[RMDB]
RNA sequence: GGGAACGACUCGAGUAGAGUCGAAAACUGAUAUGCUUCGGCAUAUCAGAAAAUAAGCUGCAAAAAGAUCAGGAAACUGAAAACUGCAGCACUAGCAGAAAAAAACAGACGUCUUCGGACGUCUGAACAUCUAACCGUAGUUCGCUACGGUUAGAUGAAAAGAAACAACAACAACAAC
Reactivity to 2A3 in 0.01 (KOAc 150mM, MgCl2 10mM, bicine 150mM(pH8.5), 24C), signal-to-noise 2, nucleotides 027 to 126: c010u000g000a000u010a010u000g000c010u030u050c220g040g000c000a010u000a000u000c000a000g010a010a030a010a000u110a030a020g000c010u000g000c020a030a050a010a070a020g050a110u010c010a020g000g040a100a080a070c020u020g010a030a030a010a130c040u040g020c010a000g080c030a020c030u050a010g140c130a010g240a040a190a010a010a000a010a020c010a010g000a010c000g010u000c020u020u050c210g110g000a000c000g000u020c010u010g010a000a010
Reactivity to DMS in 0.01 (KOAc 150mM, MgCl2 10mM, bicine 150mM(pH8.5), 24C), signal-to-noise 2, nucleotides 027 to 126: c010u000g000a020u000a000u000g010c030u000u020c220g020g010c000a000u000a010u010c000a010g000a030a070a070a030u010a090a090g000c010u000g000c010a020a060a160a080a060g000a120u000c000a010g000g020a140a070a220c000u000g000a000a030a080a080c230u010g010c020a000g000c020a080c140u010a070g010c160a120g030a010a000a050a030a050a090a140c010a040g000a010c010g000u000c000u000u000c140g010g000a000c000g000u000c000u000g000a050a060